[RMDB]
RNA sequence: GGGAACGACUCGAGUAGAGUCGAAAAUAAUUAAUUAAUGCCUCAAGGAUACCAUAAGUUUCUUAUUUUAGGAAACUUAUUUUCAGCGCCAUACAUUGAUCCCUUGAUCAAUCAAUUAAUUAAUGCCUCUGUAUCCUCGUUUCGACGAGGAUACAGAAAAAGAAACAACAACAACAAC
Reactivity to 2A3 in 0.01 (KOAc 150mM, MgCl2 10mM, bicine 150mM(pH8.5), 24C), signal-to-noise 5, nucleotides 027 to 126: u100a000a000u010u000a010a000u000u020a010a050u030g060c020c000u010c010a020a020g030g000a050u050a180c050c020a020u000a040a000g000u000u030u000c010u040u130a300u250u300u130u170a030g000g010a000a000a000c000u000u000a020u000u040u030u090c070a040g050c030g090c100c020a050u110a220c040a090u110u230g040a040u110c000c040c000u010u070g030a040u100c040a020a050u030c030a010a050u030u020a000a010u020u020a040a040u090g050c000c000
Reactivity to DMS in 0.01 (KOAc 150mM, MgCl2 10mM, bicine 150mM(pH8.5), 24C), signal-to-noise 1, nucleotides 027 to 126: u000a010a000u000u030a000a050u010u030a080a020u000g000c240c240u000c000a010a050g000g020a080u050a080c090c230a010u000a000a010g000u010u010u010c000u000u000a130u040u030u000u040a010g040g000a040a040a000c000u040u000a000u010u000u030u010c070a060g000c100g000c110c040a030u010a130c140a060u010u000g000a030u000c160c070c060u020u000g000a020u060c140a060a050u020c190a010a000u010u010a000a020u000u010a020a000u000g000c000c010
Conditions: 150 mM KOAc, 10 mM MgCl2 and 150 mM bicine (pH 8.5), 24 C. Chemical mapping of a 177-nucleotide RNA with 2A3 and DMS. The data come from the RNA Mapping Database (RMDB), library OK1LIB.